Conditions: 150 mM KOAc, 10 mM MgCl2 and 150 mM bicine (pH 8.5), 24 C. The record gives the reactivity of an RNA of 177 nucleotides to 2A3 and DMS.
RNA sequence: GGGAACGACUCGAGUAGAGUCGAAAAGCGGGACGCUCAUGCCGUCCUGAAGCGCCUGACUGAAGGCCUGCGGAAUAAUCACCCCACCUAUUUGCUGCGCACUUAUGUCAGCAGCGCUGGCAUCGGGAUGUAUUCCUCGUUUCGACGAGGAAUACAUAAAAGAAACAACAACAACAAC
Reactivity to 2A3 in 0.01 (KOAc 150mM, MgCl2 10mM, bicine 150mM(pH8.5), 24C), signal-to-noise 2, nucleotides 027 to 126: g100c020g020g000g010a010c030g020c030u070c120a060u150g130c060c030g000u000c000c000u010g070a040a020g040c030g030c010c020u080g020a130c030u110g070a070a000g020g000c000c020u020g000c040g090g050a080a070u070a060a060u110c030a230c000c000c000c000a030c030c020u000a100u080u100u100g020c010u010g010c040g010c110a120c200u060u070a080u190g050u000c010a000g000c040a050g030c040g000c040u010g010g030c030a070u040c030g020g080g030
Reactivity to DMS in 0.01 (KOAc 150mM, MgCl2 10mM, bicine 150mM(pH8.5), 24C), signal-to-noise 3, nucleotides 027 to 126: g030c060g020g000g010a050c020g010c040u010c200a140u000g050c140c010g000u010c000c000u000g020a080a030g010c060g030c010c010u000g020a070c090u000g000a150a050g010g000c010c030u000g000c010g000g000a040a030u000a050a050u010c110a300c030c020c010c020a110c220c080u000a050u000u000u000g010c010u000g010c090g000c040a110c080u000u010a090u010g000u010c030a030g010c100a090g000c030g010c030u010g010g020c030a050u010c100g000g000g010
The data come from the RNA Mapping Database (RMDB), library OK2TRN. For 2A3, 2,022 sequencing reads were counted. For DMS the reverse transcriptase was MarathonRT. 2A3 adducts were read by reverse transcription with SuperScript II with manganese.